An RNA of 177 nucleotides, treated with 2A3 and DMS and read out base by base. For DMS the reverse transcriptase was MarathonRT.

RNA sequence: GGGAACGACUCGAGUAGAGUCGAAAAGGCAUCAGGAACUUUGAAACUUUCCUUUGUAUAUUACAUUAAUCCAUAUAAGAAAAUCUCUUUUAAUGAGGAGUGAUGUAGUUACAAACUCUCCAGAGCCAUCAUGCCGUAGGUUCGCCUACGGCAUGAUAAAAGAAACAACAACAACAAC
Reactivity to 2A3 in 0.01 (KOAc 150mM, MgCl2 10mM, bicine 150mM(pH8.5), 24C), signal-to-noise 3, nucleotides 027 to 126: g000g000c010a110u000c020a030g040g000a070a100c080u140u070u120g100a150a070a020c010u020u020u010c000c000u030u010u000g040u000a080u000a010u270u030a010c000a000u000u000a010a020u020c010c010a020u030a020u040a170a020g030a010a130a070a170u060c050u010c000u010u080u060u140a170a110u150g100a050g030g000a020g010u020g000a000u000g000u020a000g000u010u000a010c000a010a030a050c050u060c000u020c030c020a030g000a010g040c000c020
Reactivity to DMS in 0.01 (KOAc 150mM, MgCl2 10mM, bicine 150mM(pH8.5), 24C), signal-to-noise 1, nucleotides 027 to 126: g000g020c040a060u000c070a080g000g020a020a130c150u000u000u000g000a160a070a170c150u010u010u000c000c030u060u000u000g000u000a000u010a010u010u000a010c010a000u000u000a030a020u000c000c000a060u070a070u090a020a000g000a050a030a060a180u040c260u000c000u000u000u020u050a000a070u010g010a110g020g000a060g000u010g000a000u010g000u000a040g020u000u000a000c020a000a030a170c040u030c040u040c040c090a020g000a080g000c020c000

The RNA was probed in 150 mM KOAc, 10 mM MgCl2 and 150 mM bicine (pH 8.5) at 24 C. The DMS profile rests on 1,304 reads.